[RMDB]
RNA sequence: GGGAACGACUCGAGUAGAGUCGAAAAUGUCUCCUAGCUAAUAAAGAGCAAGAAGCUAUUUUGAUGUCUGAAGACGUUAAGUUAAACCCUUCAGAAGAUUUUAUAAAGCACGUCCGCACUAAUGGUGGUAAUAUAUUAAGUUCGCUUAAUAUAUUACAAAAGAAACAACAACAACAAC
Reactivity to DMS in 0.01 (KOAc 150mM, MgCl2 10mM, bicine 150mM(pH8.5), 24C), signal-to-noise 5, nucleotides 027 to 126: u000g010u010c040u010c020c010u010a130g010c020u000a070a100u010a070a140a150g000a050g020c010a110a090g010a070a050g020c030u000a030u010u000u000u010g000a130u010g000u000c010u000g010a030a010g010a060c130g020u000u010a080a130g010u010u010a070a070a060c010c030c000u000u010c040a020g010a050a090g000a060u010u000u000u000a040u010a120a090a050g000c030a060c050g010u000c020c040g020c040a040c060u000a070a070u000g010g010u000g000
Reactivity to 2A3 in 0.01 (KOAc 150mM, MgCl2 10mM, bicine 150mM(pH8.5), 24C), signal-to-noise 2, nucleotides 027 to 126: u060g010u000c010u000c030c010u030a020g000c000u020a070a060u080a150a300a050g060a020g020c030a040a030g070a100a010g060c000u030a100u050u090u050u030g070a030u040g030u020c000u020g000a030a030g020a040c040g020u010u040a020a040g040u020u070a080a070a050c000c000c000u000u010c010a030g000a040a000g000a000u000u120u000u000a190u050a080a070a000g010c020a000c020g040u010c020c030g010c020a010c060u080a140a100u100g080g030u020g050
Structure probing data (DMS and 2A3) for a 177-nucleotide construct. The 2A3 profile rests on 2,806 reads. The data come from the RNA Mapping Database (RMDB), library 15KREP. The reactions ran in a buffer of 150 mM KOAc, 10 mM MgCl2 and 150 mM bicine (pH 8.5), at 24 C.